[RMDB]
RNA sequence: GGGAACGACUCGAGUAGAGUCGAAAAGAUAUGGAGAAGGACCCACAGGCUAUAAUCUCGGAAACGAGGUAGCCUGUGGUCUAGUUCUCCUAAGUCAAAGUCUUACUAUGUUCGCAUAGUAAGACAAGCACAUAGGCAUGUUCGCAUGCCUAUGUGCAAAAGAAACAACAACAACAAC
Reactivity to 2A3 in 0.01 (KOAc 150mM, MgCl2 10mM, bicine 150mM(pH8.5), 24C), signal-to-noise 1, nucleotides 027 to 126: g020a000u110a040u140g000g000a000g010a010a020g030g020a020c090c020c010a020c050a000g040g000c010u020a030u070a300a300u240c020u030c010g050g030a090a070a070c020g020a000g000g000u000a000g010c000c000u000g000u000g000g000u010c000u030a020g000u000u030c000u000c000c000u030a120a000g070u010c040a110a060a090g000u000c000u000u000a020c010u000a000u010g020u030u120c280g090c180a010u010a000g010u010a010a000g010a000c000a010a000
Reactivity to DMS in 0.01 (KOAc 150mM, MgCl2 10mM, bicine 150mM(pH8.5), 24C), signal-to-noise 1, nucleotides 027 to 126: g000a020u010a300u000g000g000a000g000a030a050g010g000a080c260c010c090a000c000a000g000g000c000u000a050u020a240a060u010c000u010c020g000g010a080a140a180c030g000a010g020g000u000a010g010c000c000u000g000u000g000g010u000c000u000a160g020u000u010c000u020c000c000u000a010a070g010u010c030a030a120a090g000u000c000u000u000a000c000u000a010u000g000u000u010c280g030c030a010u000a000g000u000a010a000g000a010c000a020a070
The record gives the reactivity of an RNA of 177 nucleotides to 2A3 and DMS. For 2A3 the reverse transcriptase was SuperScript II with manganese. High DMS reactivity at an A or C suggests that its Watson-Crick edge is free. For DMS the reverse transcriptase was MarathonRT. Reactivities are rounded to 0.1 and cut off at 0 and 3. Values cover nucleotides 27 to 126. The reactions ran in a buffer of 150 mM KOAc, 10 mM MgCl2 and 150 mM bicine (pH 8.5), at 24 C. It was measured as part of the RMDB library TTRDEL.